[RMDB]
RNA sequence: GGGAACGACUCGAGUAGAGUCGAAAAUGUGGUAGUGUUGGUUACACCAAGGAGGGUAGUGUGAUCAAUUUCUGUUACAUGCAUCAAAUGGAACUUGCUAAUGGUACACAUACCGGUUCAGCAUUUGCCUACCUUGGGAGUUCGCUCCCAAGGUAGGAAAAGAAACAACAACAACAAC
Reactivity to 2A3 in 0.01 (KOAc 150mM, MgCl2 10mM, bicine 150mM(pH8.5), 24C), signal-to-noise 3, nucleotides 027 to 126: u030g000u010g010g000u010a010g000u000g010u010u020g020g020u000u010a000c000a010c010c020a060a040g110g040a060g010g070g010u090a030g000u040g000u000g030a010u000c000a010a010u110u240u000c010u000g020u000u010a010c000a020u040g050c010a090u060c040a050a040a030u070g040g020a030a020c010u050u060g030c020u070a090a040u070g010g050u090a050c160a010c010a150u050a050c010c010g080g000u020u060c030a030g010c020a030u010u040u040g020
Reactivity to DMS in 0.01 (KOAc 150mM, MgCl2 10mM, bicine 150mM(pH8.5), 24C), signal-to-noise 1, nucleotides 027 to 126: u000g000u000g000g010u000a010g020u000g010u000u000g000g000u000u000a040c000a010c000c030a110a090g010g010a150g000g010g010u000a100g000u000g030u010g030a030u000c000a010a000u000u010u000c010u010g010u000u000a030c010a010u000g020c170a090u010c060a000a040a060u000g000g000a010a000c070u000u000g040c070u000a050a030u020g010g010u000a070c230a120c220a070u000a010c090c040g000g000u020u010c070a100g000c010a040u010u010u020g000

Structure probing data (2A3 and DMS) for a 177-nucleotide construct. 2A3 is a SHAPE reagent: it acylates the 2'-hydroxyl of flexible nucleotides of all four kinds. The data come from the RNA Mapping Database (RMDB), library 15KREP. The DMS profile rests on 988 reads. Reactivities are given for positions 27 through 126. The 2A3 profile rests on 3,781 reads.